[RMDB]
RNA sequence: GGGAACGACUCGAGUAGAGUCGAAAAAGUUUUCGAAUCUAUGCGCAUAUGCGUACGUGCAUAUGUAGACAUAUGUAUAUAUACGUACAAAAAUGAGCACGUGAGUAUGCAAACAUAGAUGCAUACGCCAUGAUUUACGAUUCGUCGUAAAUCAUGGAAAAGAAACAACAACAACAAC
Reactivity to 2A3 in 0.01 (KOAc 150mM, MgCl2 10mM, bicine 150mM(pH8.5), 24C), signal-to-noise 6, nucleotides 027 to 126: a000g040u050u030u020u100c040g040a060a030u000c010u050a030u050g000c030g000c020a000u020a020u080g040c040g040u060a040c040g040u060g010c010a010u040a020u120g030u060a090g060a030c040a020u080a020u060g040u030a010u000a000u000a010u020a090c040g020u010a020c030a020a100a050a040a080u110g020a050g010c020a010c110g090u080g020a050g020u010a000u010g000c000a050a090a070c030a100u120a030g060a070u010g000c010a030u030a020c020g000
Reactivity to DMS in 0.01 (KOAc 150mM, MgCl2 10mM, bicine 150mM(pH8.5), 24C), signal-to-noise 7, nucleotides 027 to 126: a120g010u000u000u010u000c020g010a120a070u010c030u010a060u000g010c030g000c010a020u000a030u000g010c300g000u010a010c060g020u000g000c030a030u000a020u000g020u010a110g010a180c130a050u000a010u000g010u000a060u010a100u010a110u010a040c030g010u000a010c030a010a180a050a060a040u000g010a070g010c010a020c110g020u000g000a110g030u010a000u000g000c000a040a070a080c140a100u000a070g000a090u010g000c030a020u000a010c060g010
The record gives the reactivity of an RNA of 177 nucleotides to 2A3 and DMS. The DMS profile rests on 8,666 reads. The RNA was probed in 150 mM KOAc, 10 mM MgCl2 and 150 mM bicine (pH 8.5) at 24 C. Reactivities are given for positions 27 through 126. The 2A3 profile rests on 11,509 reads.